An RNA of 207 nucleotides, treated with 2A3 and DMS and read out base by base.
It was measured as part of the RMDB library M2RFOK.
Values are in units of 0.01, from 0 to 300, in steps of 10.
RNA sequence: GGGAACGACUCGAGUAGAGUCGAAAAACAUGCUGGCCAACCCAACCCCACGAUCCUCCAUCGGCAUGAUCAUGAUGUGUUCUCAAAUAUCAGGCCAGUAAAUCACCAUGCUCGUGCUUGUAAAGGCAACUUAUGCCCAAGUUCGCUUGGGCAUAAACCAUAGAUGGACUUUCGAGUCCAUCUAUGGAAAAGAAACAACAACAACAAC
Reactivity to 2A3 in 0.01 (KOAc 150mM, MgCl2 10mM, bicine 150mM(pH8.5), 24C), signal-to-noise 5, nucleotides 027 to 156: a000c050a010u070g000c000u010g000g030c000c000a070a050c070c060c040a040a080c040c010c020c000a060c070g060a130u090c010c020u040c040c030a100u050c030g020g000c000a000u030g000a010u020c010a000u010g060a050u090g030u010g030u070u030c030u020c040a110a120a030u230a120u110c070a040g000g020c000c000a000g000u020a000a060a040u150c020a010c050c000a010u020g010c010u000c020g010u000g000c020u050u000g020u070a130a190a050g030g000c020a030a050c030u030u010a000u000g000c000c000c000a010a020g010u060u070c080g010c120u000u000g040g000g000c000a000u000a000a000a000
Reactivity to DMS in 0.01 (KOAc 150mM, MgCl2 10mM, bicine 150mM(pH8.5), 24C), signal-to-noise 2, nucleotides 027 to 156: a050c060a070u000g020c010u000g000g030c010c020a160a150c100c030c030a100a160c040c000c010c040a080c080g010a140u000c040c030u000c030c020a070u020c120g040g020c020a020u000g020a040u000c030a020u000g020a040u000g030u000g000u010u040c020u000c050a150a080a140u020a090u000c050a160g020g020c020c040a040g000u000a010a020a080u010c030a000c020c000a030u000g010c090u000c010g030u000g010c000u000u030g050u000a060a110a030g010g030c080a050a080c100u000u010a020u000g000c020c000c000a010a060g020u000u000c300g020c010u000u000g010g030g000c000a010u000a000a010a160
Reactivities are given for positions 27 through 156.